[RMDB]
RNA sequence: GGGAACGACUCGAGUAGAGUCGAAAAGAUAUGGAGCAUAUGGGACAUGAACUGGUGUCGGAAACGACACCGUGUUCAACAGCCCAUUAUGCUCCUAAGUCAAAAGACUUGUGUUCGCACAAGUCAACAGUAAAAUAUUGUUCGCAAUAUUUUACUGAAAAGAAACAACAACAACAAC
Reactivity to 2A3 in 0.01 (KOAc 150mM, MgCl2 10mM, bicine 150mM(pH8.5), 24C), signal-to-noise 6, nucleotides 027 to 126: g000a000u010a000u070g000g000a000g020c000a000u010a000u020g000g030g000a060c180a300u300g000a160a000c010u030g000g010u010g000u000c000g000g010a020a010a010c000g010a010c000a000c000c000g010u030g000u000u000c030a090a090c090a080g010c010c010c000a000u030u010a000u000g000c000u000c000c000u000a000a000g000u000c000a000a000a060a170g010a000c000u000u000g000u010g030u070u120c300g010c110a020c020a010a000g000u000c000a000a020
Reactivity to DMS in 0.01 (KOAc 150mM, MgCl2 10mM, bicine 150mM(pH8.5), 24C), signal-to-noise 9, nucleotides 027 to 126: g000a020u000a070u010g000g000a010g010c000a010u000a010u000g000g010g010a030c110a210u010g010a010a010c000u000g000g020u000g010u000c000g020g000a020a010a040c000g010a010c000a000c000c000g010u010g010u000u000c000a120a090c260a160g000c000c000c000a000u010u010a010u000g000c000u000c000c000u000a000a050g000u000c010a130a110a120a150g000a020c000u000u000g020u000g010u000u010c260g030c010a010c000a010a010g000u000c000a080a120

This 177-nucleotide RNA was probed chemically with 2A3 and DMS. In probing experiments dimethyl sulfate is read out at A N1 and C N3, which are open when not base-paired. For DMS the reverse transcriptase was MarathonRT. The RNA was probed in 150 mM KOAc, 10 mM MgCl2 and 150 mM bicine (pH 8.5) at 24 C. For 2A3, 31,202 sequencing reads were counted.